Background:
Structure probing data (2A3 and DMS) for a 177-nucleotide construct. The data come from the RNA Mapping Database (RMDB), library OK1LIB. Values cover nucleotides 27 to 126. For DMS the reverse transcriptase was MarathonRT. 2A3 adducts were read by reverse transcription with SuperScript II with manganese.
RNA sequence: GGGAACGACUCGAGUAGAGUCGAAAAGCAAUCGACGUGCUUAUCGAGCGGUUGCGGAAGGUGUUGGUGGCGGUGGCCGCUGCUCCGGAACGGACGGUGUCGUCGAUCGAUGCGCUGGAUGGGACCGAUUCACGUACGGGUUCGCCCGUACGUGAAUAAAAGAAACAACAACAACAAC
Reactivity to 2A3 in 0.01 (KOAc 150mM, MgCl2 10mM, bicine 150mM(pH8.5), 24C), signal-to-noise 3, nucleotides 027 to 126: g010c010a010a050u000c000g020a020c030g050u110g060c110u160u110a110u190c040g020a070g080c020g020g000u010u020g010c000g000g030a130a010g020g030u130g010u190u110g020g040u080g040g000c090g070g120u100g130g000c010c000g000c050u030g010c040u020c010c000g030g050a090a080c040g030g060a010c000g010g090u040g020u050c030g000u000c020g010a070u050c050g030a030u050g010c040g010c050u040g000g010a030u050g020g010g020a030c010c040g020
Reactivity to DMS in 0.01 (KOAc 150mM, MgCl2 10mM, bicine 150mM(pH8.5), 24C), signal-to-noise 2, nucleotides 027 to 126: g010c040a060a040u010c030g000a040c050g010u020g000c190u030u020a060u020c030g000a150g030c010g010g000u000u010g010c040g000g040a140a160g030g070u010g000u010u000g020g010u000g000g000c010g010g000u050g000g000c030c000g020c030u000g060c060u000c030c020g040g000a170a050c080g000g000a160c000g020g000u020g000u000c020g010u010c050g000a050u010c090g000a090u030g000c140g020c010u010g000g000a060u000g000g000g010a020c030c050g010